[RMDB]
RNA sequence: GGGAACGACUCGAGUAGAGUCGAAAACAUCGCACUUCGGUGCGAUGAAAAAGAUAUGGACACGUCAUAAGGGAGAAUAGUGGGUCGGAAACGACCCAUGGGUUCGAGGAUCUUAUGAGCGUGUCCUAAGUCAAAAACAACUCCUUCGGGAGUUGAACAAAUUUAGAACCUUCGGGUUCUAAAUUUGAAAAGAAACAACAACAACAAC
Reactivity to 2A3 in 0.01 (KOAc 150mM, MgCl2 10mM, bicine 150mM(pH8.5), 24C), signal-to-noise 1, nucleotides 027 to 156: c010a000u000c010g000c010a010c000u040u100c300g110g000u000g010c000g000a000u030g000a040a000a000a000a000g070a020u100a020u070g000g000a000c000a000c020g040u030c000a000u000a020a010g020g000g010a010g030a070a000u020a020g040u000g000g000g000u000c010g000g020a120a110a010c010g000a000c010c030c010a000u000g010g070g010u010u000c020g050a210g030g000a000u000c000u020u000a010u000g080a080g150c000g000u000g000u010c000c000u000a000a000g000u010c020a000a000a060a030a060c000a000a000c010u000c000c000u010u010c080g100g000g000a000g000u000u020g010a020a010
Reactivity to DMS in 0.01 (KOAc 150mM, MgCl2 10mM, bicine 150mM(pH8.5), 24C), signal-to-noise 1, nucleotides 027 to 156: c020a050u000c000g050c000a000c000u010u030c280g070g010u000g010c010g020a000u000g010a010a020a110a130a080g000a120u000a290u000g000g000a020c030a040c000g020u000c010a010u000a010a040g000g010g020a050g000a030a040u000a300g020u000g010g030g020u000c010g050g000a180a200a300c000g030a020c010c010c000a000u000g000g000g000u010u000c040g020a080g040g020a070u000c020u030u040a010u000g000a080g050c030g030u000g000u000c010c000u030a000a130g020u010c010a020a100a100a130a130c000a020a030c010u000c000c000u000u000c230g010g030g010a060g000u000u030g000a070a210